[RMDB]
RNA sequence: GGGAACGACUCGAGUAGAGUCGAAAACAACAAGAUAAUUGAUGACUUUAUCUCACGGAUCUUUGCCAAGAACUUUGUCGAGUAUGUCCAGGACGGUGUAGGUCCUUUAACUAAACCCACCAAGAGCUAACUGAAACAGGUUCGCCUGUUUCAGUUAAAAAGAAACAACAACAACAAC
Reactivity to DMS in 0.01 (KOAc 150mM, MgCl2 10mM, bicine 150mM(pH8.5), 24C), signal-to-noise 2, nucleotides 027 to 126: c060a070a120c120a060a030g020a070u010a070a070u010u000g010a060u030g010a080c090u070u010u000a060u010c030u010c090a120c170g020g000a060u000c030u000u010u000g020c060c030a080a090g000a080a050c060u000u000u010g000u010c030g010a090g010u000a060u000g030u020c020c110a070g000g000a090c130g020g020u000g020u000a080g020g000u010c020c020u000u000u010a030a050c150u010a020a080a080c040c030c010a070c060c080a080a100g020a080g010c170
Reactivity to 2A3 in 0.01 (KOAc 150mM, MgCl2 10mM, bicine 150mM(pH8.5), 24C), signal-to-noise 1, nucleotides 027 to 126: c030a040a010c010a030a040g040a080u060a100a130u190u070g090a130u060g030a080c020u130u080u050a050u070c050u000c020a020c040g000g000a010u070c020u100u020u170g040c050c010a040a000g030a070a110c060u070u120u130g050u030c010g010a000g070u110a070u170g050u000c030c000a040g040g030a000c020g070g000u100g020u030a070g000g040u020c000c000u030u110u000a010a000c020u060a100a040a040c000c000c020a000c020c030a140a000g070a010g150c020